RNA sequence: GGGAACGACUCGAGUAGAGUCGAAAAGCAACGUAAAUCUUAGAUAAAACCAUAGAAUCCGUGGGGGCGACAUCGCCUGAAGCCGAUCUCGAGAUCGAUAACUCCGGUUAAUUGGUCUCAGCGUGAGCGGUACAGACCUCUUCGGAGGUCUGUACCGAAAAGAAACAACAACAACAAC
Reactivity to DMS in 0.01 (KOAc 150mM, MgCl2 10mM, bicine 150mM(pH8.5), 24C), signal-to-noise 2, nucleotides 027 to 126: g010c120a110a060c070g010u010a040a110a030u000c070u030u020a100g010a140u020a050a050a110a130c050c060a040u000a090g000a090a080u000c090c070g010u000g010g000g010g020g030c000g030a090c240a080u000c050g000c060c020u000g010a100a050g040c040c100g000a080u000c060u010c040g000a000g000a020u000c000g010a020u000a010a020c010u000c300c170g030g010u000u000a040a110u010u020g010g000u010c000u000c020a090g040c120g040u000g020a150g020
Reactivity to 2A3 in 0.01 (KOAc 150mM, MgCl2 10mM, bicine 150mM(pH8.5), 24C), signal-to-noise 1, nucleotides 027 to 126: g000c010a040a040c050g090u210a080a020a100u050c020u020u070a100g020a080u150a110a070a010a050c000c000a040u040a100g090a070a050u000c060c010g020u040g020g050g010g010g020c030g000a110c030a140u220c020g020c020c010u010g040a030a000g030c020c000g040a050u040c030u050c070g070a070g010a030u010c000g000a000u030a020a000c020u000c000c110g030g000u050u020a220a090u070u020g000g030u000c010u030c000a040g000c030g060u070g080a040g050
Source information
Structure probing data (DMS and 2A3) for a 177-nucleotide construct. The 2A3 profile rests on 907 reads. The RNA was probed in 150 mM KOAc, 10 mM MgCl2 and 150 mM bicine (pH 8.5) at 24 C. For DMS, 839 sequencing reads were counted. DMS (dimethyl sulfate) methylates the pairing face of unpaired adenines and cytosines.